[RMDB]
RNA sequence: GGGAACGACUCGAGUAGAGUCGAAAAAUAAGUGAAACCGGCAGUGUGACCAGCGCCUGCGCUGUUGCCCACAUCAUCGGAUGUUUGUCGGGAUUUUCCCGCAGCCAGCGGGCGUUGCGCAGGGCAACUAAUGGCAGUGGUUCGCCACUGCCAUUAGAAAAGAAACAACAACAACAAC
Reactivity to 2A3 in 0.01 (KOAc 150mM, MgCl2 10mM, bicine 150mM(pH8.5), 24C), signal-to-noise 1, nucleotides 027 to 126: a010u100a070a000g080u000g240a180a000a060c020c050g090g070c030a100g020u070g000u060g270a110c030c030a050g000c170g220c000c000u000g000c030g000c030u030g010u120u210g010c010c050c000a010c000a000u070c020a060u160c090g190g020a000u050g070u060u140u130g080u220c010g000g000g000a000u090u050u130u010c000c000c000g030c000a010g040c100c040a030g000c030g000g010g020c030g150u250u090g000c020g000c000a000g010g000g050c000a000a000
Reactivity to DMS in 0.01 (KOAc 150mM, MgCl2 10mM, bicine 150mM(pH8.5), 24C), signal-to-noise 2, nucleotides 027 to 126: a120u000a110a070g020u010g010a050a080a100c120c030g010g030c040a030g010u010g020u000g000a110c070c040a120g000c060g010c010c010u010g000c000g020c000u010g000u000u010g020c000c010c000a110c040a070u010c100a150u000c230g040g000a080u000g010u000u010u010g000u010c020g010g000g000a210u000u000u000u000c000c000c010g020c030a100g000c060c080a090g000c130g010g010g000c020g010u020u000g000c020g030c050a030g010g040g030c050a060a150
An RNA of 177 nucleotides, treated with 2A3 and DMS and read out base by base. DMS adducts were read by reverse transcription with MarathonRT. It was measured as part of the RMDB library OK2TST. For DMS, 1,585 sequencing reads were counted. The 2A3 profile rests on 587 reads. The RNA was probed in 150 mM KOAc, 10 mM MgCl2 and 150 mM bicine (pH 8.5) at 24 C.